[RMDB]
RNA sequence: GGGAACGACUCGAGUAGAGUCGAAAAGCUCUGGAAUUGAGUCCCCUCUAACAAUAAUCCAAAACUACUUCGCAGAGUAAUCUGCCGAAUCGUAGGAUGCCCAUUACUAUCUAUUUUUGGAGCAUCUAAAACUGUCAGUGCUUCGGCACUGACAGAAGAUAGUUUUGUAGUUCGCUACAAAACUAUCAAAAGAAACAACAACAACAAC
Reactivity to 2A3 in 0.01 (KOAc 150mM, MgCl2 10mM, bicine 150mM(pH8.5), 24C), signal-to-noise 4, nucleotides 027 to 156: g020c000u000c020u010g070g100a180a090u180u040g020a040g050u070c020c000c030c000u070c100u100a130a140c090a090a100u140a090a050u030c030c030a000a070a030a130c020u040a020c000u000u010c000g000c010a000g000a020g020u120a080a160u000c010u010g030c070c040g040a010a010u080c060g000u010a040g010g040a000u000g000c000c000c020a000u050u030a060c070u090a060u170c020u070a200u160u100u010u020u030g020g000a110g020c000a000u000c000u060a030a050a040a090c000u000g000u000c000a000g000u000g000c010u040u140c170g060g000c000a000c000u000g000a000c000a000g000a000a000
Reactivity to DMS in 0.01 (KOAc 150mM, MgCl2 10mM, bicine 150mM(pH8.5), 24C), signal-to-noise 1, nucleotides 027 to 156: g050c000u050c000u000g060g010a070a220u000u000g000a050g000u030c000c020c030c050u020c090u000a130a130c070a130a080u020a100a080u010c000c020a110a110a150a160c000u000a080c060u010u000c070g020c000a020g000a080g000u020a200a150u000c030u000g000c050c030g000a010a050u000c090g000u000a100g050g000a070u010g010c000c020c000a130u000u000a060c200u000a150u010c100u000a190u000u000u000u000u000g010g030a160g010c040a040u010c010u020a010a050a140a110c010u000g000u000c000a060g010u000g030c030u020u000c300g020g000c050a010c000u000g000a030c010a010g000a040a050